[RMDB]
Notes: An RNA of 177 nucleotides, treated with 2A3 and DMS and read out base by base. The DMS profile rests on 7,340 reads. DMS adducts were read by reverse transcription with MarathonRT. The 2A3 profile rests on 5,994 reads. It was measured as part of the RMDB library OK2TST. The reactions ran in a buffer of 150 mM KOAc, 10 mM MgCl2 and 150 mM bicine (pH 8.5), at 24 C.
RNA sequence: GGGAACGACUCGAGUAGAGUCGAAAAGCUUCGUGCGCAUCUGGUAUGAUUCCAAUGGGUCAACUCAGUCCGAGAAUGAAUCUGAGUUUCUUUCAAAUGUUGAUCCACCAGCAGGGGUUAAGGUGCACCCUAUAGAGCAUUUCGAUGCUCUAUAGGGAAAAGAAACAACAACAACAAC
Reactivity to 2A3 in 0.01 (KOAc 150mM, MgCl2 10mM, bicine 150mM(pH8.5), 24C), signal-to-noise 5, nucleotides 027 to 126: g030c040u090u100c100g120u110g050c040g010c010a030u020c010u050g070g000u180a100u270g050a090u100u040c010c010a020a050u050g000g010g010u030c010a010a020c010u020c060a040g110u020c060c040g070a080g060a110a090u160g040a020a060u080c100u110g030a040g130u030u020u030c050u010u070u030c020a110a110a100u100g000u070u040g010a020u010c020c010a020c000c020a040g080c050a070g010g000g020g040u040u060a060a010g030g000u020g000c010a050
Reactivity to DMS in 0.01 (KOAc 150mM, MgCl2 10mM, bicine 150mM(pH8.5), 24C), signal-to-noise 6, nucleotides 027 to 126: g000c070u000u010c080g030u000g010c070g010c040a040u000c010u000g010g010u010a080u000g010a100u010u000c040c050a110a160u010g010g010g010u000c020a030a020c020u010c110a100g020u000c110c100g010a180g010a080a070u010g010a050a040u000c110u010g010a100g000u000u000u000c040u000u000u000c070a060a090a090u010g000u000u000g000a020u000c010c010a070c100c060a080g010c120a090g000g000g000g010u010u000a070a060g010g010u000g030c070a210